[RMDB]
Chemical mapping of a 177-nucleotide RNA with 2A3 and DMS. It was measured as part of the RMDB library TTRDEL. The RNA was probed in 150 mM KOAc, 10 mM MgCl2 and 150 mM bicine (pH 8.5) at 24 C. 2A3 adducts were read by reverse transcription with SuperScript II with manganese. Values are in units of 0.01, from 0 to 300, in steps of 10.

RNA sequence: GGGAACGACUCGAGUAGAGUCGAAAAGAUAUGGACUGAAUGACCGAUAAGUCGGUAUCGGAAACGAUACCCGACUUUUGACGGUCGCGUCCUAAGUCAAACCGAGCUCUCUUCGGAGAGCUCGGAACUAAUACGUAAUGUUCGCAUUACGUAUUAGAAAAGAAACAACAACAACAAC
Reactivity to 2A3 in 0.01 (KOAc 150mM, MgCl2 10mM, bicine 150mM(pH8.5), 24C), signal-to-noise 9, nucleotides 027 to 126: g020a010u070a040u140g010g010a010c060u170g110a290a300u300g000a030c010c020g050a120u040a180a020g000u000c000g000g000u000a000u000c000g010g020a070a030a010c010g000a000u010a010c030c040c020g000a010c000u010u020u030u140g170a040c010g000g000u000c000g010c010g000u000c000c000u020a150a020g060u030c050a060a040a100c000c000g000a000g000c000u010c000u000c000u060u170c300g100g000a000g000a010g000c000u000c000g000g000a000a000
Reactivity to DMS in 0.01 (KOAc 150mM, MgCl2 10mM, bicine 150mM(pH8.5), 24C), signal-to-noise 9, nucleotides 027 to 126: g000a040u000a300u000g000g000a010c010u010g030a060a100u000g010a010c000c000g020a130u000a010a010g010u000c000g000g010u000a000u000c000g010g000a110a070a160c000g010a010u000a000c090c040c030g020a010c000u000u000u000u000g010a170c080g010g000u000c000g010c070g000u000c000c000u000a040a110g000u000c030a070a110a210c000c000g000a010g010c000u000c000u000c000u000u010c190g020g010a010g000a000g010c000u000c000g000g000a010a050